[RMDB]
RNA sequence: GGGAACGACUCGAGUAGAGUCGAAAAAAGGGCAUCUUACAUGGUAGAGGUCUCAAUUUGUCACAGAGUUCAGACCUUACCAACUGUAAUGUGCUUUUAAUGAAAACAGUGACCAAGACCUCUCGUGUGUUUUUAAUGUUUAGUCAUUUUGUGACUACCUUUUAUGCAUAUUCGUAUGCAUAAAAGGAAAAGAAACAACAACAACAAC
Reactivity to DMS in 0.01 (KOAc 150mM, MgCl2 10mM, bicine 150mM(pH8.5), 24C), signal-to-noise 3, nucleotides 027 to 156: a070a050g000g000g020c010a030u010c240u010u000a050c020a080u000g020g030u010a050g020a030g010g020u000c020u000c070a050a060u000u000u000g010u000c210a170c200a300g010a110g010u010u000c040a050g010a040c020c010u000u010a030c010c000a030a100c220u000g000u010a030a030u000g040u010g000c010u000u010u000u000a060a150u010g010a080a050a060a030c060a120g010u000g000a070c030c080a070a120g010a050c010c020u000c030u010c030g030u000g010u010g000u000u010u000u000u010a060a170u010g020u010u000u010a040g010u000c030a090u000u000u000u000g020u000g000a080c000u010a150
Reactivity to 2A3 in 0.01 (KOAc 150mM, MgCl2 10mM, bicine 150mM(pH8.5), 24C), signal-to-noise 5, nucleotides 027 to 156: a000a000g010g000g010c010a020u020c020u010u010a000c000a020u040g020g000u060a090g020a020g260g000u000c000u000c010a010a020u020u030u060g120u110c050a030c020a120g060a010g030u000u020c020a000g000a010c000c000u000u000a010c010c020a060a090c050u020g000u010a000a000u030g000u000g000c000u020u030u010u030a070a060u040g060a010a030a020a020c050a050g070u050g100a040c040c040a040a020g030a060c040c000u040c020u050c060g040u060g020u000g040u070u020u030u070u150a160a130u120g050u070u080u040a020g010u020c010a050u030u170u190u300g130u040g030a000c000u030a030